RNA sequence: GGGAACGACUCGAGUAGAGUCGAAAAGAUAUGGAGGCCUCUUUUGACGAAGUCCCAGUCGGAAACGACUGCGGCCCGGCUUCGAUAAGAGGCUCCUAAGUCAAAGCCAGACCUUCGGGUCUGGCAAGAUAUACCUGGUGUUCGCACCAGGUAUAUCAAAAGAAACAACAACAACAAC
Reactivity to 2A3 in 0.01 (KOAc 150mM, MgCl2 10mM, bicine 150mM(pH8.5), 24C), signal-to-noise 2, nucleotides 027 to 126: g010a020u110a070u230g000g060a050g250g300c030c000u020c000u140u100u100u170g180a100c020g000a010a000g050u030c030c020c020a000g000u000c000g050g000a090a050a070c010g010a000c010u020g050c150g060g000c020c110c020g100g010c000u030u010c020g020a010u020a090a000g000a000g000g030c000u020c000c000u020a130a020g030u010c070a140a050a010g000c000c020a010g010a000c000c040u070u180c300g170g000g020u000c000u010g000g040c010a010a010
Reactivity to DMS in 0.01 (KOAc 150mM, MgCl2 10mM, bicine 150mM(pH8.5), 24C), signal-to-noise 3, nucleotides 027 to 126: g010a040u000a290u000g010g000a000g010g000c010c010u000c020u000u000u000u010g010a230c090g010a040a010g020u000c000c040c000a020g020u000c000g010g000a140a150a130c000g010a000c000u000g030c220g040g000c300c110c120g000g000c040u000u000c010g030a120u010a020a010g000a000g000g020c010u000c010c000u000a020a150g000u010c040a080a160a130g010c010c000a010g000a020c000c000u000u010c240g010g000g000u000c010u010g010g000c010a010a020